Structure probing data (DMS and 2A3) for a 207-nucleotide construct.
The RNA was probed in 150 mM KOAc, 10 mM MgCl2 and 150 mM bicine (pH 8.5) at 24 C.
For 2A3, 2,432 sequencing reads were counted.
Values are in units of 0.01, from 0 to 300, in steps of 10.
Source: RMDB library RNAMAK, as collected in RNAgym.

[RMDB]
RNA sequence: GGGAACGACUCGAGUAGAGUCGAAAACCGUAGGGCUCCUACCCACCUUCCGUUCACUCGAUGAAAUACGCUUCGAAAGAGGCGUAUGGAGAGUGUACGGAAGAGGGAGCCCUAAACGGAAAACAAUGAGUGAGCCUUUCGAGGCUCACUCAUUGAAGAGUAUAUCCUCUUUCGAGAGGAUAUACUCAAAAGAAACAACAACAACAAC
Reactivity to DMS in 0.01 (KOAc 150mM, MgCl2 10mM, bicine 150mM(pH8.5), 24C), signal-to-noise 1, nucleotides 027 to 156: c020c020g000u000a000g020g000g020c010u000c010c020u000a060c000c020c050a300c090c020u000u000c000c000g010u030u000c040a020c020u000c000g140a150u000g000a240a100a020u000a010c030g050c000u040u000c020g060a120a140a300g040a030g000g030c000g010u020a000u000g000g000a080g010a010g020u000g010u000a000c020g000g030a000a020g000a080g070g000g000a020g000c000c000c000u000a000a000a020c030g000g000a120a070a080a180c020a020a020u010g030a010g000u010g030a050g030c020c000u000u020u000c280g020a040g040g000c020u000c000a000c000u000c000a000u010u000g020a080a090
Reactivity to 2A3 in 0.01 (KOAc 150mM, MgCl2 10mM, bicine 150mM(pH8.5), 24C), signal-to-noise 2, nucleotides 027 to 156: c010c000g010u010a000g000g000g010c010u000c000c010u080a150c060c060c000a070c030c000u000u000c010c000g020u040u060c010a010c010u030c000g300a300u030g010a000a000a000u000a000c000g010c010u010u010c000g020a060a070a030g000a010g010g000c000g000u000a000u000g000g010a010g000a010g000u000g000u000a000c000g000g000a000a000g000a000g000g010g000a000g000c000c020c010u000a000a020a000c000g030g030a040a030a040a060c000a000a010u000g000a000g010u000g000a000g020c000c030u040u100u180c300g150a020g000g000c000u000c000a000c000u010c000a000u000u000g000a000a000